Notes
Chemical mapping of a 207-nucleotide RNA with 2A3 and DMS. The reactions ran in a buffer of 150 mM KOAc, 10 mM MgCl2 and 150 mM bicine (pH 8.5), at 24 C. Reactivities are rounded to 0.1 and cut off at 0 and 3. It was measured as part of the RMDB library RNAMAK. The 2A3 profile rests on 1,971 reads. 2A3 adducts were read by reverse transcription with SuperScript II with manganese. For DMS the reverse transcriptase was MarathonRT.
RNA sequence: GGGAACGACUCGAGUAGAGUCGAAAAAUCACAGUUCGCUGUGAUGCUUGAACCUUUGUGAAUUGCUAAGACAGGGGAGACAAUACUUACCCAUUGGGUAAGUUGUCGAGGAUCUCGAGCAAUUCACUCUGGUAUAUUGAGGUGUUUCGACACCUAAGAACGACACGUAUUUCGAUACGUGUCGUUCAAAAGAAACAACAACAACAAC
Reactivity to 2A3 in 0.01 (KOAc 150mM, MgCl2 10mM, bicine 150mM(pH8.5), 24C), signal-to-noise 3, nucleotides 027 to 156: a000u000c000a020c000a010g030u070u080c140g080c130u000g000u010g000a020u030g040c020u080u210g100a100a050c000c000u000u020u000g000u000g000a000a000u010u010g000c030u080a100a120g040a070c060a170g150g000g020g000a090g020a010c010a050a070u090a170c000u000u030a010c010c010c090a300u120u300g000g000g010u000a010a000g000u000u010g000u010c000g020a050g000g110a120u000c020u010c050g040a020g000c000a000a000u000u000c000a000c000u000c010u020g000g070u070a120u020a050u180u250g130a040g010g020u020g000u010u200u160c210g080a020c010a000c020c000u010a040a070
Reactivity to DMS in 0.01 (KOAc 150mM, MgCl2 10mM, bicine 150mM(pH8.5), 24C), signal-to-noise 1, nucleotides 027 to 156: a150u010c010a020c030a000g020u010u010c300g040c000u000g040u000g010a060u000g000c070u010u000g010a130a200c010c030u000u000u000g050u000g000a060a030u020u000g050c010u000a080a030g000a050c100a000g010g050g000g030a300g010a070c000a050a110u010a030c000u000u000a010c010c010c030a300u010u010g080g000g060u010a000a020g020u000u000g000u000c020g030a300g040g000a170u070c010u000c020g000a090g000c000a030a040u000u000c010a030c030u050c040u000g030g040u000a040u000a030u000u000g010a050g000g030u000g040u010u000u000c220g010a140c030a050c000c000u000a080a120